This 177-nucleotide RNA was probed chemically with DMS and 2A3. High DMS reactivity at an A or C suggests that its Watson-Crick edge is free. 2A3 adducts were read by reverse transcription with SuperScript II with manganese.
[RMDB]
RNA sequence: GGGAACGACUCGAGUAGAGUCGAAAAGAUAUGGAAUGGUGGGACAUGAGCUCUGGUCGGAAACGACCAACGUGAGCUCAACAGCCCACCCAUUCCUAAGUCAAAGGUCUUACUUCGGUAAGACCAAGGUGUAUUAACUGUUCGCAGUUAAUACACCAAAAGAAACAACAACAACAAC
Reactivity to DMS in 0.01 (KOAc 150mM, MgCl2 10mM, bicine 150mM(pH8.5), 24C), signal-to-noise 4, nucleotides 027 to 126: g000a000u000a060u020g000g000a010a000u000g000g040u010g000g000g000a030c060a270u020g010a000g010c000u010c000u000g010g000u000c000g020g010a010a020a050c000g020a000c000c000a010a040c300g010u010g010a010g040c000u010c000a070a020c240a180g000c000c000c000a010c140c090c100a000u000u010c000c000u000a000a100g000u000c010a090a180a170g010g000u000c000u000u000a000c000u000u020c210g030g010u000a000a000g000a010c010c000a010a020
Reactivity to 2A3 in 0.01 (KOAc 150mM, MgCl2 10mM, bicine 150mM(pH8.5), 24C), signal-to-noise 6, nucleotides 027 to 126: g000a000u010a000u050g000g010a000a010u000g000g010u020g000g030g000a060c240a300u300g030a070g010c010u010c010u010g000g000u000c010g000g010a020a000a010c010g000a000c020c020a010a010c110g250u050g010a000g000c010u010c000a010a000c040a000g000c000c000c000a000c000c010c000a000u000u000c000c000u000a010a000g000u000c040a120a140a120g000g000u010c010u000u010a010c010u040u120c300g140g000u010a000a000g000a000c000c000a000a010

High 2A3 reactivity points to a flexible backbone, as in loops and unpaired stretches. The RNA was probed in 150 mM KOAc, 10 mM MgCl2 and 150 mM bicine (pH 8.5) at 24 C. It was measured as part of the RMDB library TTRDES.